[RMDB]
RNA sequence: GGGAACGACUCGAGUAGAGUCGAAAAGCAGCAGUGAAUUAAAAUAAACAUGAAGAUCAAGAACAAGAUACAAACGGCAAGUAUCGUUCGAUCCAUGAGCCGAAAAAUAUCACAAAGAAGAAGAAAAAAGUGAUAUAGAUUUCGAUCUAUAUCACUUAAAAGAAACAACAACAACAAC
Reactivity to DMS in 0.01 (KOAc 150mM, MgCl2 10mM, bicine 150mM(pH8.5), 24C), signal-to-noise 4, nucleotides 027 to 126: g010c050a040g010c070a080g010u000g000a050a140u010u020a070a060a080a090u010a070a100a120c050a020u010g010a150a110g000a030u000c010a090a110g020a020a020c050a100a090g010a010u000a010c020a030a100a120c120g000g000c120a070a090g020u000a020u000c030g000u010u000c030g010a040u000c020c030a020u010g000a090g020c050c030g000a000a040a080a080a040u010a030u010c050a040c080a060a060a070g010a080a050g000a070a080g010a000a060a070a070
Reactivity to 2A3 in 0.01 (KOAc 150mM, MgCl2 10mM, bicine 150mM(pH8.5), 24C), signal-to-noise 3, nucleotides 027 to 126: g010c020a000g020c030a020g030u010g050a070a040u150u100a100a070a030a160u110a040a050a020c020a020u020g090a110a070g000a010u040c040a070a050g010a010a010c050a070a080g010a010u010a010c030a010a160a020c070g160g000c060a110a070g000u000a000u010c000g000u060u050c030g000a000u000c000c000a020u050g030a010g050c020c000g110a070a040a000a020a000u100a030u060c030a000c030a160a050a020g080a040a010g040a030a010g010a050a170a050a060
Structure probing data (DMS and 2A3) for a 177-nucleotide construct. It was measured as part of the RMDB library M2PK90. DMS adducts were read by reverse transcription with MarathonRT. The 2A3 profile rests on 2,546 reads. The reactions ran in a buffer of 150 mM KOAc, 10 mM MgCl2 and 150 mM bicine (pH 8.5), at 24 C.